[RMDB]
RNA sequence: GGGAACGACUCGAGUAGAGUCGAAAAUCCUAAGUCUGUUACGAAACGGUCCAACAGCUUUCAUUGUCAGAAUUUCGGAAACGAAAUUCUUGGAUUUAUGAAAGACAUGGACCGAUAAGUAACAGAUAUGGAAAACUCGUAUCUUCGGAUACGAGAAGACCCUUAUUUAGUUCGCUAAAUAAGGGUCAAAAGAAACAACAACAACAAC
Reactivity to DMS in 0.01 (KOAc 150mM, MgCl2 10mM, bicine 150mM(pH8.5), 24C), signal-to-noise 2, nucleotides 027 to 156: u010c010c000u000a070a300g020u000c000u000g010u000u000a010c000g010a110a290a300c010g010g020u010c000c010a050a160c020a220g000c000u010u000u010c000a030u000u000g020u000c000a090g000a040a000u010u000u000c000g020g000a160a140a300c010g010a030a010a000u000u000c030u010u010g030g000a060u000u010u000a010u010g000a000a000a010g010a040c060a300u000g010g010a000c020c010g000a000u000a010a300g010u010a000a030c000a000g010a020u010a140u010g000g020a060a030a110a180c020u000c000g030u000a000u010c000u000u020c300g000g010a010u000a000c000g010a010g000a000a120
Reactivity to 2A3 in 0.01 (KOAc 150mM, MgCl2 10mM, bicine 150mM(pH8.5), 24C), signal-to-noise 3, nucleotides 027 to 156: u030c000c000u020a100a000g010u010c000u000g000u010u000a010c020g010a160a210a050c000g000g000u020c010c020a040a040c060a240g000c010u000u010u000c000a010u010u000g030u000c000a000g010a000a000u000u000u000c000g010g040a060a100a080c010g000a000a000a010u010u000c010u010u090g060g000a010u140u250u210a010u040g000a000a000a000g030a040c040a120u040g000g000a000c000c000g000a000u000a010a000g000u000a000a000c000a000g000a000u010a030u010g010g000a020a070a060a090c000u000c000g000u000a000u000c000u040u050c210g180g000a000u000a000c000g000a000g000a000a010
Record summary
An RNA of 207 nucleotides, treated with DMS and 2A3 and read out base by base. The DMS profile rests on 2,282 reads. The 2A3 profile rests on 4,254 reads.